[RMDB]
RNA sequence: GGGAACGACUCGAGUAGAGUCGAAAAGGGGUCGACAGGAAUUGACAGGUUGAGUGAUUACGUGUGUAAGCAUGCAGGCUCAUGGGAUGAGAGCCUUAAAAGAUAGUUCCGAACAAUAAUUGGCGAAGAAUCUUACGCCAUGGCUGCUUAAUUACGACUGCAGAUAACAGUUCGCUGUUAUCUGCAGAAAAGAAACAACAACAACAAC
Reactivity to 2A3 in 0.01 (KOAc 150mM, MgCl2 10mM, bicine 150mM(pH8.5), 24C), signal-to-noise 3, nucleotides 027 to 156: g040g000g000g010u030c020g020a020c050a050g040g070a040a060u090u060g040a010c030a020g000g080u090u090g040a030g010u080g020a090u060u100a020c040g020u070g000u000g030u070a010a030g030c000a020u110g010c020a010g000g010c000u000c030a020u060g020g000g010a000u060g010a000g000a000g000c000c010u030u040a030a070a000a010g030a020u030a010g010u050u000c050c070g050a020a010c020a050a000u140a050a090u110u020g000g030c020g000a060a010g090a150a110u080c050u130u110a050c010g000c000c040a010u020g000g000c000u010g000c020u150u090a090a040u160u080a090c050g060a060
Reactivity to DMS in 0.01 (KOAc 150mM, MgCl2 10mM, bicine 150mM(pH8.5), 24C), signal-to-noise 2, nucleotides 027 to 156: g010g030g030g000u010c010g030a150c040a090g020g010a030a080u000u000g000a110c020a090g010g000u010u000g010a080g040u000g010a110u010u000a090c050g050u030g050u000g040u030a070a130g030c010a050u010g040c100a040g020g000c000u010c010a020u010g010g020g000a120u000g000a180g000a060g030c010c010u010u000a020a060a100a150g010a100u000a160g000u000u000c010c000g000a060a160c130a080a150u000a050a150u020u000g020g000c040g000a110a080g000a040a080u000c120u000u010a160c010g020c020c000a050u000g000g030c010u010g000c020u010u000a040a140u000u000a200c080g010a170